[RMDB]
The record gives the reactivity of an RNA of 207 nucleotides to DMS and 2A3.
For 2A3, 4,422 sequencing reads were counted.
For DMS the reverse transcriptase was MarathonRT.
The DMS profile rests on 11,845 reads.

RNA sequence: GGGAACGACUCGAGUAGAGUCGAAAAGUUCACAUGGUGCACUAUUGUGUUAUUAGUAACUAAGUAAGCUUACAAUCGAAAAUGUUUAACCAUAAAAGGGUAAAAUGGUGUAAGACAGUCUGAUACUUUACGGCUUCACGUUUCGACGUGAAGCCAACUUUAUAUCGAAGUUCGCUUCGAUAUAAAGAAAAGAAACAACAACAACAAC
Reactivity to DMS in 0.01 (KOAc 150mM, MgCl2 10mM, bicine 150mM(pH8.5), 24C), signal-to-noise 4, nucleotides 027 to 156: g010u000u000c020a030c010a300u000g000g000u000g030c020a060c060u010a060u000u000g030u000g020u000u000a060u010u000a110g010u010a050a100c050u010a080a150g010u000a080a090g010c030u000u010a040c030a050a150u000c040g010a080a070a060a120u010g020u000u000u000a050a070c010c020a060u000a050a120a140a160g010g000g010u000a020a050a050a050u000g010g020u000g010u000a050a040g010a050c040a080g000u010c030u000g020a100u000a050c040u000u000u010a100c110g020g030c000u010u000c000a010c000g010u000u010u010c280g010a060c000g020u010g000a010a000g000c000c010a000a020
Reactivity to 2A3 in 0.01 (KOAc 150mM, MgCl2 10mM, bicine 150mM(pH8.5), 24C), signal-to-noise 6, nucleotides 027 to 156: g030u080u080c050a020c040a110u110g050g030u060g010c030a010c030u090a140u150u230g020u010g020u060u020a040u020u030a050g080u030a070a020c050u030a070a070g060u020a040a040g050c010u050u070a030c050a080a140u090c060g110a080a040a010a050u030g010u020u070u040a040a020c000c000a020u090a170a150a040a020g040g010g030u060a030a040a020a040u060g010g010u030g010u040a030a020g030a020c010a010g030u030c040u050g040a060u050a200c020u050u070u090a100c120g000g000c000u000u000c000a000c010g010u030u030u150c220g080a040c000g000u000g000a010a000g000c000c000a000a000